[RMDB]
Structure probing data (DMS and 2A3) for a 177-nucleotide construct.
In probing experiments dimethyl sulfate is read out at A N1 and C N3, which are open when not base-paired.
For DMS, 107,588 sequencing reads were counted.
DMS adducts were read by reverse transcription with MarathonRT.
It was measured as part of the RMDB library OK1LIB.
RNA sequence: GGGAACGACUCGAGUAGAGUCGAAAAAGAUCCUCGGAUUGCAAACUGCAGAGUGAGCACAGUCAGGCCUGUGCUCAUUAUGUGCAGUGGAAACACUGCACAUGAUUCCUGCAGGCCUGACGAGGAAGCUUGUAUAGCAUUUCGAUGUUGUGCGAGCAAAAGAAACAACAACAACAAC
Reactivity to DMS in 0.01 (KOAc 150mM, MgCl2 10mM, bicine 150mM(pH8.5), 24C), signal-to-noise 9, nucleotides 027 to 126: a080g010a110u000c000c000u000c010g000g010a180u020u010g010c090a100a090a300c040u010g000c060a030g010a070g010u000g010a080g000c010a030c030a050g000u010c060a070g010g000c140c000u000g010u000g000c050u010c030a000u000u010a000u000g000u000g000c000a000g020u000g010g000a170a110a170c000a000c000u000g000c000a000c000a000u000g000a090u030u020c140c040u010g000c000a010g000g000c010c030u000g000a240c010g000a020g000g010a050a110
Reactivity to 2A3 in 0.01 (KOAc 150mM, MgCl2 10mM, bicine 150mM(pH8.5), 24C), signal-to-noise 9, nucleotides 027 to 126: a000g100a090u030c000c000u010c010g030g040a120u100u190g070c090a120a120a120c040u030g000c020a010g030a030g110u050g010a010g020c010a000c010a010g030u090c030a020g010g110c010c000u000g000u010g010c010u000c000a000u000u010a000u000g000u000g000c000a000g000u000g000g000a010a010a000c000a000c000u000g000c000a000c000a000u000g010a010u110u100c010c010u020g000c000a000g000g000c000c000u010g000a010c000g000a010g000g010a060a030